[RMDB]
RNA sequence: GGGAACGACUCGAGUAGAGUCGAAAAGUCUUGGUAAUGAAGUCGAGACGUACAAUUUUGCAUUAAAGCGUAUUUGUAAACAAGUUCGUCAGGUCACGUAUACCGAUUCCGGUUCGGAUAAGCAAGGCGUGUAGCAAUGCUUCGGCAUUGCUACACGAAAAGAAACAACAACAACAAC
Reactivity to 2A3 in 0.01 (KOAc 150mM, MgCl2 10mM, bicine 150mM(pH8.5), 24C), signal-to-noise 1, nucleotides 027 to 126: g010u020c020u010u040g000g040u130a160a160u240g090a100a060g030u050c020g000a030g000a030c030g000u000a020c020a010a020u000u090u030u300g040c030a070u000u300a060a020a070g100c030g040u120a100u070u020u060g040u060a060a060a010c050a040a020g040u060u050c010g020u050c060a050g100g010u040c040a030c070g000u050a000u030a080c030c000g010a070u190u000c060c050g040g000u070u050c010g000g020a090u080a080a000g050c080a010a010g070g000
Reactivity to DMS in 0.01 (KOAc 150mM, MgCl2 10mM, bicine 150mM(pH8.5), 24C), signal-to-noise 2, nucleotides 027 to 126: g030u000c020u000u000g010g010u010a150a080u000g000a090a110g030u000c020g010a070g010a040c020g000u000a050c060a070a140u010u010u000u010g000c010a060u030u000a100a120a190g000c080g000u020a060u000u010u020g020u000a050a040a120c140a080a100g010u010u000c010g020u000c020a030g010g020u000c040a020c090g010u000a060u010a060c060c010g000a080u000u010c050c050g000g020u000u000c070g020g000a110u000a080a120g010c040a050a080g010g010

An RNA of 177 nucleotides, treated with 2A3 and DMS and read out base by base. It was measured as part of the RMDB library OK2TST. DMS adducts were read by reverse transcription with MarathonRT. Conditions: 150 mM KOAc, 10 mM MgCl2 and 150 mM bicine (pH 8.5), 24 C. For 2A3, 1,032 sequencing reads were counted.